Structure probing data (DMS and 2A3) for a 207-nucleotide construct. The reactions ran in a buffer of 150 mM KOAc, 10 mM MgCl2 and 150 mM bicine (pH 8.5), at 24 C. For 2A3 the reverse transcriptase was SuperScript II with manganese. For DMS the reverse transcriptase was MarathonRT.

[RMDB]
RNA sequence: GGGAACGACUCGAGUAGAGUCGAAAAGUAUUGUAGUUACCUCUUUACUAGUAUGUCUCAAGCUGUAAGCUCCUUGAAGGCAGGGAUUUUCUCUUACCUUUCACUCCAUUCAUUGUGUGUAGCACAGUCUCUGACUAUAGUGGACAUUGUAAAGGUAUACUAUAGCCCGAUUCGUCGGGCUAUAGUAAAAAGAAACAACAACAACAAC
Reactivity to DMS in 0.01 (KOAc 150mM, MgCl2 10mM, bicine 150mM(pH8.5), 24C), signal-to-noise 2, nucleotides 027 to 156: g020u000a010u000u010g020u010a070g010u000u000a070c060c030u010c020u000u000u000a060c040u000a130g020u030a080u000g010u000c000u010c020a040a110g010c050u000g000u010a110a180g010c020u000c010c020u000u010g010a040a080g020g010c040a070g000g010g010a130u000u000u010u000c020u000c020u010u000a020c020c000u000u000u000c040a090c030u010c030c030a100u010u000c090a100u010u000g000u000g020u000g020u010a070g020c010a030c030a060g000u000c030u000c050u000g020a080c040u000a110u010a080g040u010g010g010a050c060a090u010u000g030u000a020a050a030g010g040u010a130
Reactivity to 2A3 in 0.01 (KOAc 150mM, MgCl2 10mM, bicine 150mM(pH8.5), 24C), signal-to-noise 3, nucleotides 027 to 156: g070u060a060u150u190g060u150a070g040u050u080a080c030c000u040c020u040u030u020a020c040u040a050g140u050a050u080g030u020c030u010c070a020a070g010c040u090g040u150a100a080g010c030u040c050c010u030u050g020a050a000g020g020c020a030g000g010g020a020u040u000u210u000c030u010c000u070u090a080c010c000u030u060u030c020a040c030u020c040c010a080u090u120c040a070u140u030g010u000g040u010g040u160a030g020c030a020c040a120g050u020c040u000c030u080g060a110c030u080a050u040a160g040u100g120g000a020c020a070u080u120g030u030a000a040a010g000g030u050a060